[RMDB]
RNA sequence: GGGAACGACUCGAGUAGAGUCGAAAAGGGGCUGACAGGAAUCGACAGUAGAGUGUAUCAUGUCAGUAAGCAUGCCGGGGAAUGGUGGUUUACCCCGUUAUCAAAUGAUUACCGACAAAUAAUUGGCUUAGCUCGUUGGGCUUCGGCCCAACGAGAACUAUCCGCGCAUGUUCGCAUGCGCGGAUAGAAAAGAAACAACAACAACAAC
Reactivity to 2A3 in 0.01 (KOAc 150mM, MgCl2 10mM, bicine 150mM(pH8.5), 24C), signal-to-noise 1, nucleotides 027 to 156: g010g000g010g020c020u000g020a040c030a010g000g120a010a110u170c110g070a020c010a070g120u170a050g110a050g080u120g000u000a050u070c080a060u040g040u040c000a010g010u020a030a010g030c110a060u080g090c000c020g000g000g000g000a020a020u070g020g060u010g010g030u090u030u130a090c000c000c030c040g000u060u060a060u050c010a100a000a050u030g020a020u060u130a020c020c000g030a000c150a010a080a010u250a070a120u110u030g070g000c070u110u050a020g030c000u010c060g000u000u000g000g010g000c000u000u010c190g060g040c060c000c000a000a000c000g000a000g000a010a000